[RMDB]
RNA sequence: GGGAACGACUCGAGUAGAGUCGAAAAGAUAUGGAUUACUCGGGAGACGACCCUUCGGAAACGAAGGCGUCGUCGACGAUCGAGGUAAUCCUAAGUCAAAACUAUCUGCUGUUCGCAGCAGAUAGAAGAUUAAUAGCUACUUCGGUAGCUAUUAAUCAAAAGAAACAACAACAACAAC
Reactivity to 2A3 in 0.01 (KOAc 150mM, MgCl2 10mM, bicine 150mM(pH8.5), 24C), signal-to-noise 1, nucleotides 027 to 126: g000a000u020a000u060g000g000a000u000u010a000c000u000c000g010g010g010a020g010a000c000g000a000c010c010c000u000u000c000g000g000a000a000a000c010g010a000a010g010g000c040g010u000c000g010u000c000g010a010c000g000a000u000c000g010a020g080g060u040a000a010u010c000c000u000a000a010g010u000c000a000a020a100a160c000u000a000u000c000u010g000c010u010g090u080u160c300g010c170a000g000c010a000g000a000u000a010g000a020a000
Reactivity to DMS in 0.01 (KOAc 150mM, MgCl2 10mM, bicine 150mM(pH8.5), 24C), signal-to-noise 6, nucleotides 027 to 126: g010a010u000a030u010g000g000a010u000u010a000c000u000c000g010g000g000a020g000a010c000g000a010c000c000c000u000u000c000g010g000a010a000a030c010g020a020a000g010g010c300g010u000c010g040u000c000g000a030c180g000a010u010c010g000a030g000g010u000a010a010u000c000c000u000a000a060g000u000c000a060a090a120a230c000u000a000u000c000u000g010c010u000g010u000u010c230g010c010a000g000c000a000g000a010u000a000g000a070a080